[RMDB]
RNA sequence: GGGAACGACUCGAGUAGAGUCGAAAAGAUAUGGAUGGAGCCUUGGAAUGUUCCGUCGUCGGAAACGACGAUACGGAACGAGAGAAGGUCUCCAUCCUAAGUCAAAAUCGUGUGUUCGCACACGAAACGGCAGUGUACAGUUCGCUGUACACUGCCGAAAAGAAACAACAACAACAAC
Reactivity to 2A3 in 0.01 (KOAc 150mM, MgCl2 10mM, bicine 150mM(pH8.5), 24C), signal-to-noise 1, nucleotides 027 to 126: g000a000u070a010u080g000g020a000u010g000g000a020g000c030c060u070u090g220g250a300a080u300g090u020u000c000c010g010u000c000g020u000c010g030g000a040a000a040c010g000a010c000g010a030u100a130c110g010g000a000a000c020g010a010g030a030g040a090a020g070g020u060c010u050c000c010a000u010c000c000u000a010a030g000u000c010a010a000a040a300u020c000g000u040g000u000g060u000u110c300g050c160a000c020a000c000g010a110a040a040
Reactivity to DMS in 0.01 (KOAc 150mM, MgCl2 10mM, bicine 150mM(pH8.5), 24C), signal-to-noise 1, nucleotides 027 to 126: g010a030u000a300u020g000g000a010u000g000g000a010g000c000c000u010u000g000g000a190a240u010g010u000u000c000c010g000u000c000g010u000c000g000g000a040a120a120c000g050a010c000g000a150u000a000c030g020g000a000a000c010g010a140g020a300g000a100a020g010g000u030c000u000c000c000a060u000c000c000u000a010a060g000u010c060a090a130a100a100u050c030g000u000g000u000g010u010u000c270g000c000a000c000a000c000g050a040a030a200